[RMDB]
An RNA of 207 nucleotides, treated with DMS and 2A3 and read out base by base. Reactivities are given for positions 27 through 156. The reactions ran in a buffer of 150 mM KOAc, 10 mM MgCl2 and 150 mM bicine (pH 8.5), at 24 C. Source: RMDB library OK3TST, as collected in RNAgym. 2A3 adducts were read by reverse transcription with SuperScript II with manganese.
RNA sequence: GGGAACGACUCGAGUAGAGUCGAAAAAUAAUGUGCACCUAGUUCUUCAUAGGUCUUUAAAUGUCACUGAUAACAUAAACAACGCUUCUAAGCGUACAGAACUUUUAUAUGCACAUGGCUUUAUUCUCUAUAGUCUUCAACUGAACUGAAUUAAGUGCUACGAAAGUGAGUUCGCUCACUUUCGUAGAAAAGAAACAACAACAACAAC
Reactivity to DMS in 0.01 (KOAc 150mM, MgCl2 10mM, bicine 150mM(pH8.5), 24C), signal-to-noise 1, nucleotides 027 to 156: a200u000a000a020u020g020u000g020c030a100c010c120u030a080g060u000u020c000u000u000c070a190u010a120g010g040u000c040u000u010u020a020a130a070u010g010u000c010a300c070u010g040a150u010a060a140c030a070u000a080a080a070c020a100a050c010g010c000u010u000c150u010a080a080g020c010g000u020a120c120a010g020a030a030c000u000u000u000u000a090u030a030u050g030c010a070c010a060u000g000g000c050u000u000u000a010u030u000c000u010c040u000a120u000a080g000u070c010u000u010c150a030a030c080u010g000a120a230c080u000g000a060a080u010u010a010a110g010u000g020
Reactivity to 2A3 in 0.01 (KOAc 150mM, MgCl2 10mM, bicine 150mM(pH8.5), 24C), signal-to-noise 4, nucleotides 027 to 156: a010u160a020a030u030g000u000g020c010a000c000c040u020a010g030u050u070c030u110u050c070a180u070a120g030g050u040c030u070u170u100a140a200a080u160g040u070c060a080c130u080g080a080u120a220a050c040a060u140a150a140a020c050a060a010c020g010c010u180u050c050u270a170a060g000c010g020u070a020c030a030g020a000a010c000u070u070u150u120a130u080a010u150g000c000a010c000a020u020g000g000c010u090u090u010a060u160u000c060u000c000u060a110u040a190g070u000c030u140u090c090a100a060c080u100g030a000a030c000u020g020a010a030u050u100a110a010g060u100g030